[RMDB]
RNA sequence: GGGAACGACUCGAGUAGAGUCGAAAAAGUUCGCGCUUCCGUGAAACGCGAAAAUCGGACCGUGGCUGCAAGUCGCAUCGCAAAACCGCGGCAAGUGGAGUUAGCGAGAGGAGGCUGGGUUUUGGCUAGAACACACGGUACUUCGGUACCGUGUGAAGUUAUAUACCCGGUUCGCCGGGUAUAUAACAAAAGAAACAACAACAACAAC
Reactivity to 2A3 in 0.01 (KOAc 150mM, MgCl2 10mM, bicine 150mM(pH8.5), 24C), signal-to-noise 3, nucleotides 027 to 156: a000g090u050u040c000g010c000g030c070u170u040c040c050g130u090g050a140a050a030c030g020c030g040a070a000a000a060u150c030g030g010a020c040c000g030u030g040g000c030u050g010c030a070a000g010u070c060g030c100a080u040c020g010c040a080a090a000a030c040c010g020c020g080g010c110a070a060g020u060g050g020a060g000u060u050a030g030c020g010a030g020a060g030g010a020g010g010c040u010g020g000g020u010u020u090u060g050g000c020u030a040g050a160a010c020a000c000a000c000g010g030u000a000c000u010u030c110g080g000u000a010c000c000g000u000g000u000g000a000a000
Reactivity to DMS in 0.01 (KOAc 150mM, MgCl2 10mM, bicine 150mM(pH8.5), 24C), signal-to-noise 2, nucleotides 027 to 156: a150g020u010u000c020g010c020g020c010u000u000c020c200g030u000g060a020a040a000c010g040c020g000a020a020a100a120u010c080g000g050a050c030c000g030u000g030g070c040u000g010c030a090a150g000u000c060g070c060a150u000c060g000c040a060a050a150a090c010c060g020c010g040g000c040a080a130g030u020g010g010a140g010u010u000a130g030c010g020a100g020a090g020g030a080g040g020c040u000g000g010g020u000u000u000u000g000g000c060u000a090g010a100a210c000a040c010a010c000g000g040u000a000c010u000u010c220g060g020u000a000c000c010g030u000g010u010g010a000a050
An RNA of 207 nucleotides, treated with 2A3 and DMS and read out base by base. It was measured as part of the RMDB library M2RFPK. For 2A3 the reverse transcriptase was SuperScript II with manganese. DMS adducts were read by reverse transcription with MarathonRT. Values cover nucleotides 27 to 156. The reactions ran in a buffer of 150 mM KOAc, 10 mM MgCl2 and 150 mM bicine (pH 8.5), at 24 C.